Source: RMDB library TTRDES, as collected in RNAgym. The record gives the reactivity of an RNA of 177 nucleotides to 2A3 and DMS. The RNA was probed in 150 mM KOAc, 10 mM MgCl2 and 150 mM bicine (pH 8.5) at 24 C. 2A3 adducts were read by reverse transcription with SuperScript II with manganese.
RNA sequence: GGGAACGACUCGAGUAGAGUCGAAAAGAUAUGGAGACACCUAGACAUGAGAGGUAUCGGAAACGAUACUCUCUCAACAGCUAGUCAAUUCGUGUCUCCUAAGUCAAAAGAUACCUUCGGGUAUCAAGGCUUACACAAGGUUCGCCUUGUGUAAGCCAAAAGAAACAACAACAACAAC
Reactivity to 2A3 in 0.01 (KOAc 150mM, MgCl2 10mM, bicine 150mM(pH8.5), 24C), signal-to-noise 1, nucleotides 027 to 126: g030a000u020a020u100g000g010a000g000a000c010a010c010c010u010a000g050a090c140a300u270g000a000g000a010g000g000u000a000u010c000g070g060a040a010a000c020g000a000u000a010c020u040c000u010c000u000c020a000a020c080a050g020c010u050a000g050u110c100a080a170u270u150c040g000u000g000u000c000u000c020c010u000a000a000g000u000c000a040a070a010a100g010a010u010a000c010c000u040u160c300g180g010g000u000a010u000c010a000a080
Reactivity to DMS in 0.01 (KOAc 150mM, MgCl2 10mM, bicine 150mM(pH8.5), 24C), signal-to-noise 2, nucleotides 027 to 126: g000a010u000a160u010g000g000a000g040a020c010a010c000c060u000a010g010a050c130a260u010g010a020g100a040g000g000u000a000u000c000g000g000a090a010a030c000g020a000u000a010c000u010c030u000c000u000c000a040a050c290a210g010c110u010a070g000u010c300a060a150u030u030c300g020u000g020u000c000u000c000c000u000a000a030g000u000c020a060a080a110a050g000a060u000a010c030c000u000u000c170g010g010g000u000a000u000c000a110a070